[RMDB]
RNA sequence: GGGAACGACUCGAGUAGAGUCGAAAAAACAGCUUCGGCUGUUACCAGCGUACUACAGAGAGGUAGGGAGGCGAUAAGGUGUUCCCAAAUAGGAACACCUUUUGACGCCUCUUUCUACUACCCACCUCUGUAUCGCCUAUCGCGGCUUCGGCCGCGACAAGUGAGUUGAAUUCGUUCAACUCACUUGAAAAGAAACAACAACAACAAC
Reactivity to DMS in 0.01 (KOAc 150mM, MgCl2 10mM, bicine 150mM(pH8.5), 24C), signal-to-noise 3, nucleotides 027 to 156: a070a040c000a040g010c010u000u010c300g070g010c000u000g020u000u000a060c040c030a130g010c010g000u010a070c070u000a050c000a020g000a040g010a120g010g000u010a040g010g000g000a020g020g040c010g020a200u000a030a020g030g030u000g010u020u000c000c000c000a020a140a210u010a050g020g010a040a020c000a000c010c010u000u000u000u000g020a270c020g020c010c000u000c000u000u000u010c080u000a100c000u000a030c010c010c020a300c170c010u000c000u010g030u000a000u000c020g020c020c050u010a110u000c000g030c000g020g020c010u000u010c300g040g030c000c000g030c000g010a010
Reactivity to 2A3 in 0.01 (KOAc 150mM, MgCl2 10mM, bicine 150mM(pH8.5), 24C), signal-to-noise 3, nucleotides 027 to 156: a000a000c050a030g020c050u130u110c280g240g000c000u000g010u010u010a010c000c000a010g000c010g010u070a080c040u000a000c030a000g000a010g000a020g000g000u010a000g020g010g000a000g000g000c010g020a040u010a080a010g000g000u000g000u010u020c030c020c030a140a180a070u250a070g000g000a000a000c010a000c010c030u010u020u010u040g070a020c020g000c000c000u000c000u000u010u010c000u010a010c000u000a000c010c000c010a150c020c000u000c010u010g020u010a020u170c010g010c000c010u130a130u040c000g000c010g000g000c000u060u110c250g110g000c000c000g000c010g000a000
The data come from the RNA Mapping Database (RMDB), library RNAMAK. The record gives the reactivity of an RNA of 207 nucleotides to DMS and 2A3. For DMS the reverse transcriptase was MarathonRT.